The record gives the reactivity of an RNA of 177 nucleotides to DMS and 2A3. For 2A3 the reverse transcriptase was SuperScript II with manganese. For DMS, 4,694 sequencing reads were counted. The 2A3 profile rests on 4,822 reads. Values cover nucleotides 27 to 126. High 2A3 reactivity points to a flexible backbone, as in loops and unpaired stretches. It was measured as part of the RMDB library TTRINS.

RNA sequence: GGGAACGACUCGAGUAGAGUCGAAAAGAUAUGGAAUCUAGGGAGAUCUGUAGACCUAUGAAGUCUGGAGCUCGGAAACGAGCUCCAGAUGGAGGUUGAGGGAUCGAAGAACUAGAUUCCUAAGUCAUCUACCUCUAUAGUUCGCUAUAGAGGUAGAAAAAGAAACAACAACAACAAC
Reactivity to DMS in 0.01 (KOAc 150mM, MgCl2 10mM, bicine 150mM(pH8.5), 24C), signal-to-noise 5, nucleotides 027 to 126: g010a050u010a300u000g020g010a030a010u000c000u000a010g000g030g010a150g000a020u000c000u000g000u000a300g000a010c000c000u010a260u010g000a220a300g000u000c000u020g010g010a030g020c000u000c000g010g000a080a090a220c010g010a010g010c000u010c000c010a000g010a010u000g000g010a020g010g010u000u000g000a220g020g000g010a000u000c010g000a110a130g020a150a200c010u000a000g000a020u000u000c000c000u000a020a090g000u010c050a150
Reactivity to 2A3 in 0.01 (KOAc 150mM, MgCl2 10mM, bicine 150mM(pH8.5), 24C), signal-to-noise 3, nucleotides 027 to 126: g020a030u090a060u170g000g020a010a030u020c010u010a000g050g050g010a120g020a030u030c150u250g100u080a010g000a020c020c000u300a300u300g020a040a000g010u000c000u000g030g000a020g020c020u030c030g050g050a080a110a050c010g000a010g010c000u010c010c000a000g000a000u000g000g020a010g000g000u000u040g000a080g040g070g080a000u000c000g020a050a000g000a040a000c000u000a000g000a010u010u000c020c000u000a160a010g030u030c020a060